[RMDB]
This 177-nucleotide RNA was probed chemically with 2A3 and DMS.
DMS adducts were read by reverse transcription with MarathonRT.
DMS (dimethyl sulfate) methylates the pairing face of unpaired adenines and cytosines.
Values are in units of 0.01, from 0 to 300, in steps of 10.
Reactivities are given for positions 27 through 126.
It was measured as part of the RMDB library M2PK50.

RNA sequence: GGGAACGACUCGAGUAGAGUCGAAAAACGGGCACGUUCGCGUGCCCGUAAUGAACGCUGCAACGCGCAGAGAUCUCCCGAGAGCGCGAAUGCACAAAGAAACAUUUCCAGUUUUCGAACUGGAAAAUCUAGGACUAUUGUUCGCAAUAGUCCUAGAAAAAGAAACAACAACAACAAC
Reactivity to 2A3 in 0.01 (KOAc 150mM, MgCl2 10mM, bicine 150mM(pH8.5), 24C), signal-to-noise 1, nucleotides 027 to 126: a000c010g020g030g020c000a000c000g030u080u130c240g040c010g080u010g010c020c000c010g020u000a000a010u050g000a030a010c070g010c130u020g000c010a000a030c040g000c000g020c010a010g050a010g030a260u010c070u060c110c030c000g080a110g000a020g060c010g010c000g090a060a040u070g000c070a010c040a060a120a040g210a050a150a000c020a010u020u020u000c000c000a000g000u000u000u020u130c110g050a000a000c000u020g020g000a000a010a000a010
Reactivity to DMS in 0.01 (KOAc 150mM, MgCl2 10mM, bicine 150mM(pH8.5), 24C), signal-to-noise 3, nucleotides 027 to 126: a000c020g010g010g010c020a010c000g020u000u020c140g020c000g080u000g000c000c000c000g000u000a010a050u020g000a160a110c200g020c110u000g000c020a040a280c030g020c040g010c010a110g020a130g000a100u000c090u000c000c040c000g000a090g010a150g020c000g020c000g010a060a100u000g020c030a050c160a040a060a090g010a110a080a090c140a140u000u000u000c000c000a020g010u000u000u000u020c150g020a020a010c000u000g010g000a000a000a020a060
For 2A3, 1,690 sequencing reads were counted.